Structure probing data (2A3 and DMS) for a 177-nucleotide construct. For 2A3 the reverse transcriptase was SuperScript II with manganese. The RNA was probed in 150 mM KOAc, 10 mM MgCl2 and 150 mM bicine (pH 8.5) at 24 C.
RNA sequence: GGGAACGACUCGAGUAGAGUCGAAAAGGGCCGAGGCAGGCAGAAUCUGAGGUCAGGAGUUCGAGACCAGCCUGGCUAACAUGUUGAAACCCUGUUUUUACUGAAAAGACAAAAAAUUAGCUGGGCGUGAUGUAAGUGGAUUCGUCCACUUACAUCAAAAAGAAACAACAACAACAAC
Reactivity to 2A3 in 0.01 (KOAc 150mM, MgCl2 10mM, bicine 150mM(pH8.5), 24C), signal-to-noise 1, nucleotides 027 to 126: g010g010g000c050c030g020a030g030g010c050a010g020g000c000a000g060a060a060u090c070u100g030a030g060g020u060c030a020g020g120a050g030u070u150c060g000a030g030a130c010c000a000g000c000c000u000g000g000c010u000a010a000c010a090u130g050u090u090g060a100a060a050c030c020c020u020g050u030u060u000u040u020a070c020u040g060a080a040a090a010g040a000c050a020a140a010a010a000a050u000u030a030g000c000u000g000g000g000c000g040
Reactivity to DMS in 0.01 (KOAc 150mM, MgCl2 10mM, bicine 150mM(pH8.5), 24C), signal-to-noise 5, nucleotides 027 to 126: g010g010g030c020c050g010a090g010g030c050a040g010g000c080a060g000a100a060u000c040u000g010a100g010g010u000c040a080g000g000a070g020u000u000c050g000a090g010a130c070c050a130g000c000c000u000g000g000c000u000a020a030c080a110u000g000u010u000g010a080a060a100c030c060c040u010g010u000u000u000u000u010a120c170u010g000a060a020a050a030g000a050c060a010a020a030a060a060a130u010u000a030g000c020u000g000g010g010c050g010

High DMS reactivity at an A or C suggests that its Watson-Crick edge is free. The data come from the RNA Mapping Database (RMDB), library OK2TRN.